RNA sequence: GGGAACGACUCGAGUAGAGUCGAAAAGAAACGAAAGACAGCAGAGAAUUGGGCGAGCGGGUCGGCUCAAAGACGGAUACGCCAUAGUGUGUGGAGAUGUUGAUAGAGCUGUAAACGUCAUCUCUCCGACUGUGGUUCUAUUCGUAGAACCACAGUCAAAAGAAACAACAACAACAAC
Reactivity to 2A3 in 0.01 (KOAc 150mM, MgCl2 10mM, bicine 150mM(pH8.5), 24C), signal-to-noise 1, nucleotides 027 to 126: g000a010a070a000c020g050a050a000a040g030a060c000a030g030c080a020g030a000g050a170a130u150u090g060g000g020c030g000a030g080c040g050g020g100u090c030g030g000c000u000c000a020a030a010g000a040c010g000g020a010u040a060c020g020c020c020a080u140a060g140u180g040u030g020u050g000g010a060g020a050u140g020u100u010g040a080u080a070g030a000g030c060u040g040u160a070a080a000c010g040u020c030a070u020c040u000c010u020c020c040
Reactivity to DMS in 0.01 (KOAc 150mM, MgCl2 10mM, bicine 150mM(pH8.5), 24C), signal-to-noise 2, nucleotides 027 to 126: g000a030a090a060c070g030a110a120a140g010a060c100a060g000c060a120g010a110g000a110a090u000u030g010g010g020c070g020a070g020c050g010g010g010u020c050g020g010c010u010c060a060a050a210g000a020c050g010g000a190u000a060c090g010c020c020a050u000a090g010u000g000u000g040u010g010g000a030g000a190u000g020u010u010g010a090u000a130g010a120g010c020u010g010u010a050a050a070c060g020u010c040a040u010c060u000c010u000c070c160